The record gives the reactivity of an RNA of 177 nucleotides to DMS and 2A3. The 2A3 profile rests on 8,534 reads. The data come from the RNA Mapping Database (RMDB), library OK1LIB. 2A3 adducts were read by reverse transcription with SuperScript II with manganese. The RNA was probed in 150 mM KOAc, 10 mM MgCl2 and 150 mM bicine (pH 8.5) at 24 C. Values cover nucleotides 27 to 126.
[RMDB]
RNA sequence: GGGAACGACUCGAGUAGAGUCGAAAAUAACCUGCCCUAGGCUUUGGGAUAACCCUCAGAAACGAGGGCUAAUACCGGAUAUUCAUUCUCAACAGCAUCGUUGAGAAUGGAAAGUUUUUCGGCAUGGAAUUUUAUUAUUAUUCGUAGUAAUAAAAUUAAAAGAAACAACAACAACAAC
Reactivity to DMS in 0.01 (KOAc 150mM, MgCl2 10mM, bicine 150mM(pH8.5), 24C), signal-to-noise 8, nucleotides 027 to 126: u030a100a220c010c020u000g000c010c000c080u000a030g000g010c030u010u000u030g000g000g000a050u010a140a220c010c000c000u000c000a070g000a110a140a190c140g000a010g000g010g020c010u000a110a110u040a060c000c000g000g020a140u030a100u000u010c000a000u000u000c000u000c000a000a000c000a160g010c210a100u040c150g010u010u000g000a010g000a010a000u000g000g000a010a030a040g000u000u010u020u020u000c300g000g010c020a020u020g000g010
Reactivity to 2A3 in 0.01 (KOAc 150mM, MgCl2 10mM, bicine 150mM(pH8.5), 24C), signal-to-noise 7, nucleotides 027 to 126: u100a020a060c010c000u010g010c000c000c010u020a020g050g000c020u060u090u170g010g000g000a020u050a050a060c000c020c000u000c010a050g210a120a180a020c070g000a010g010g000g000c000u020a020a010u090a120c000c000g060g030a080u050a080u130u010c000a000u000u000c010u000c000a010a020c010a040g210c050a190u170c140g000u000u010g000a000g000a000a000u000g000g000a000a010a010g000u030u010u010u010u090c020g000g000c020a040u090g060g030